Source: RMDB library OK1LIB, as collected in RNAgym. Structure probing data (2A3 and DMS) for a 177-nucleotide construct. The RNA was probed in 150 mM KOAc, 10 mM MgCl2 and 150 mM bicine (pH 8.5) at 24 C. Values cover nucleotides 27 to 126. For DMS, 35,850 sequencing reads were counted. High 2A3 reactivity points to a flexible backbone, as in loops and unpaired stretches.
RNA sequence: GGGAACGACUCGAGUAGAGUCGAAAACCUCCGACUUCUCGGUGGGGAGAGAGUAAGCAGUUGACACUGAUGGUGCCAAUGAUGACCCGACACUGCAGCUCUCGGUGGUAGUGGAGGAGGGUCUGCCAUUUAUGCAGCAUUUCGAUGCUGCAUAAAUAAAAGAAACAACAACAACAAC
Reactivity to 2A3 in 0.01 (KOAc 150mM, MgCl2 10mM, bicine 150mM(pH8.5), 24C), signal-to-noise 9, nucleotides 027 to 126: c000c000u020c010c020g080a090c070u170u060c050u070c080g060g010u100g010g020g040g000a080g000a000g000a000g030u060a160a050g010c020a010g020u100u110g090a060c050a030c110u120g060a150u180g060g040u090g060c040c050a080a110u180g080a110u130g030a070c000c000c010g030a020c010a000c020u020g000c010a040g010c010u000c000u030c050g030g020u060g020g030u040a060g020u040g040g040a110g040g030a100g010g010g000u010c030u040g050c030c000
Reactivity to DMS in 0.01 (KOAc 150mM, MgCl2 10mM, bicine 150mM(pH8.5), 24C), signal-to-noise 9, nucleotides 027 to 126: c040c010u010c030c030g000a120c130u020u020c060u020c040g000g030u010g010g000g000g000a110g000a030g010a040g000u000a090a120g000c020a050g000u000u020g010a100c090a060c040u020g010a120u050g010g010u010g000c030c030a060a080u030g010a110u030g010a070c020c010c020g020a160c110a060c010u000g010c030a300g000c020u000c030u010c030g000g020u020g010g010u010a040g010u010g000g000a110g010g010a160g000g000g010u000c030u000g010c200c080